[RMDB]
RNA sequence: GGGAACGACUCGAGUAGAGUCGAAAAGAUAUGGAGUGUGCCAGACAUGGUCCCAAUUCGGAAACGAAUUGUGGACCAACAGCUGGUCACACUCCUAAGUCAAAAGUCAGAACCUUCGGGUUCUGACGUGCUUGAUAAUCUUCGGAUUAUCAAGCACAAAAGAAACAACAACAACAAC
Reactivity to 2A3 in 0.01 (KOAc 150mM, MgCl2 10mM, bicine 150mM(pH8.5), 24C), signal-to-noise 5, nucleotides 027 to 126: g010a000u010a020u080g000g000a010g000u000g000u010g000c010c000a010g020a160c160a300u300g000g020u000c000c000c000a000a010u000u010c010g000g020a030a010a020c020g010a010a020u030u030g070u300g030g000a020c000c010a010a000c010a010g010c000u010g010g000u260c000a000c000a000c000u000c000c000u000a010a000g000u000c020a010a030a130a140g000u000c000a010g000a010a010c010c000u080u170c300g170g010g000u000u010c000u010g000a000c020
Reactivity to DMS in 0.01 (KOAc 150mM, MgCl2 10mM, bicine 150mM(pH8.5), 24C), signal-to-noise 5, nucleotides 027 to 126: g000a030u010a190u010g000g010a020g040u000g010u000g010c000c000a010g020a050c130a260u010g020g010u000c000c000c000a000a010u000u000c000g020g000a030a040a090c000g000a020a010u000u000g010u020g030g020a000c000c010a020a010c220a130g010c010u000g000g000u020c020a010c000a000c010u000c000c000u000a000a060g000u010c020a120a090a100a200g010u000c000a010g010a010a010c000c000u000u010c280g030g010g020u000u010c000u010g000a000c010
Notes:
An RNA of 177 nucleotides, treated with 2A3 and DMS and read out base by base. Source: RMDB library TTRDES, as collected in RNAgym. 2A3 adducts were read by reverse transcription with SuperScript II with manganese. For DMS, 8,662 sequencing reads were counted.